An RNA of 177 nucleotides, treated with 2A3 and DMS and read out base by base. Source: RMDB library OK1LIB, as collected in RNAgym. DMS adducts were read by reverse transcription with MarathonRT. The DMS profile rests on 1,437 reads.
[RMDB]
RNA sequence: GGGAACGACUCGAGUAGAGUCGAAAAUCUUGGCUAAAAGCGGACGUUCUGUAGAGACUUGUGGUGAUGUGAAUGUCUUGAUUUUAGAUAAAACAGGUACCAUUACCUACGGCAACCGUAUGGCAGAUGCACUCUGUAGGUUCGCCUACAGAGUGCAAAAAGAAACAACAACAACAAC
Reactivity to 2A3 in 0.01 (KOAc 150mM, MgCl2 10mM, bicine 150mM(pH8.5), 24C), signal-to-noise 3, nucleotides 027 to 126: u070c010u050u240g140g000c010u040a050a090a110a030g020c050g020g020a080c080g140u240u000c000u120g020u000a040g070a080g050a300c130u140u160g000u000g110g000u020g040a110u010g020u030g040a030a050u020g000u010c000u160u130g110a300u040u010u160u300a000g010a010u030a050a020a050a000c000a040g140g120u130a000c010c000a000u010u120a050c000c000u000a000c000g030g030c010a030a170c020c000g030u120a220u160g030g000c000a000g000a200
Reactivity to DMS in 0.01 (KOAc 150mM, MgCl2 10mM, bicine 150mM(pH8.5), 24C), signal-to-noise 1, nucleotides 027 to 126: u000c000u000u000g010g010c000u010a050a060a110a090g000c010g000g000a050c180g000u000u060c040u000g140u000a060g000a070g000a040c200u030u040g000u000g050g010u000g000a130u000g090u000g010a080a000u000g000u000c000u070u080g000a140u000u000u050u000a020g000a060u000a000a000a130a000c070a000g040g010u000a030c000c040a090u030u000a100c080c000u080a060c000g000g000c150a100a190c050c000g000u000a000u000g010g000c100a050g000a300